[RMDB]
This 177-nucleotide RNA was probed chemically with DMS and 2A3.
Values cover nucleotides 27 to 126.
The DMS profile rests on 3,528 reads.
For DMS the reverse transcriptase was MarathonRT.
The 2A3 profile rests on 2,217 reads.
The RNA was probed in 150 mM KOAc, 10 mM MgCl2 and 150 mM bicine (pH 8.5) at 24 C.
For 2A3 the reverse transcriptase was SuperScript II with manganese.
Source: RMDB library OK1LIB, as collected in RNAgym.
RNA sequence: GGGAACGACUCGAGUAGAGUCGAAAAAUUUGAUUUCUGCCUGUUCAGUGUCCUCACCCGCAGCCCUGAUGACGCUGCCUGUGCGGUCAGCUGUCACCAAGUGUGUCGAGAUAGGUCUAAAACGGAAAUAGUAUCCGUCUUUCGAGACGGAUACUAUAAAAGAAACAACAACAACAAC
Reactivity to DMS in 0.01 (KOAc 150mM, MgCl2 10mM, bicine 150mM(pH8.5), 24C), signal-to-noise 2, nucleotides 027 to 126: a100u000u020u010g020a120u000u000u020c030u010g010c060c060u000g000u000u010c080a050g030u010g000u020c020c010u010c060a100c070c010c070g010c060a140g000c030c040c060u000g010a100u000g000a040c070g000c000u000g010c060c020u010g000u090g020c210g020g000u060c040a020g000c000u010g010u000c020a040c030c020a040a130g010u040g020u000g000u010c020g010a100g030a080u030a030g010g010u020c010u000a030a050a040a120c150g000g000a160a070
Reactivity to 2A3 in 0.01 (KOAc 150mM, MgCl2 10mM, bicine 150mM(pH8.5), 24C), signal-to-noise 4, nucleotides 027 to 126: a000u110u070u140g100a080u030u030u030c000u060g080c000c010u080g030u070u100c000a050g040u000g020u090c010c020u020c010a070c000c040c010g020c050a040g040c000c000c020u050g050a070u090g020a020c030g010c000u000g040c020c000u160g080u110g050c080g060g000u040c020a010g010c000u090g030u040c010a030c060c000a060a060g050u070g000u020g050u130c040g010a020g020a120u100a040g040g000u030c130u090a030a050a040a040c040g060g010a130a070